[RMDB]
RNA sequence: GGGAACGACUCGAGUAGAGUCGAAAACGAAGGAAAGCUUGACCAGCUAAUCUUCUGCAACGCCAUUACGAGGACUGCCCUCAGAGGCUCAUGGCGAUAGGUCACCCCGCCGGUCGGUCAGCUGCUUAUACCCGUGCACGGUUCGCCGUGCACGGAAGUAUGAUCUGUUGUUCGCAACAGAUCAUACAAAAGAAACAACAACAACAAC
Reactivity to DMS in 0.01 (KOAc 150mM, MgCl2 10mM, bicine 150mM(pH8.5), 24C), signal-to-noise 1, nucleotides 027 to 156: c090g010a050a000g020g020a070a180a020g000c000u000u000g000a010c040c000a300g040c030u000a030a110u000c030u000u000c020u020g070c060a110a120c030g040c050c030a170u000u000a120c170g020a170g000g000a220c010u000g010c000c000c010u040c120a120g010a220g000g010c010u000c030a090u010g000g020c040g010a130u010a080g040g030u010c030a080c060c000c000c020g030c020c000g020g000u020c070g040g000u010c000a160g020c000u000g000c010u000u000a110u020a100c120c000c010g010u000g000c000a010c040g000g000u000u010c260g050c000c010g000u000g000c040a030c020g000g010a000a050
Reactivity to 2A3 in 0.01 (KOAc 150mM, MgCl2 10mM, bicine 150mM(pH8.5), 24C), signal-to-noise 2, nucleotides 027 to 156: c030g000a020a000g010g030a300a130a000g000c020u050u020g000a040c010c010a000g000c020u050a080a060u030c040u040u000c020u070g010c040a090a080c060g010c000c030a030u070u190a030c090g000a050g090g050a070c090u130g030c000c010c000u050c050a090g060a080g080g000c050u030c010a000u010g020g000c010g030a050u120a110g000g030u050c010a060c010c020c020c000g080c060c030g050g020u040c010g000g010u040c010a020g030c020u110g000c040u190u080a110u090a170c020c000c000g030u000g000c000a000c000g000g040u030u010c120g000c090c000g000u000g000c030a000c000g000g000a000a000

Structure probing data (DMS and 2A3) for a 207-nucleotide construct. The reactions ran in a buffer of 150 mM KOAc, 10 mM MgCl2 and 150 mM bicine (pH 8.5), at 24 C. Source: RMDB library M2RFPK, as collected in RNAgym.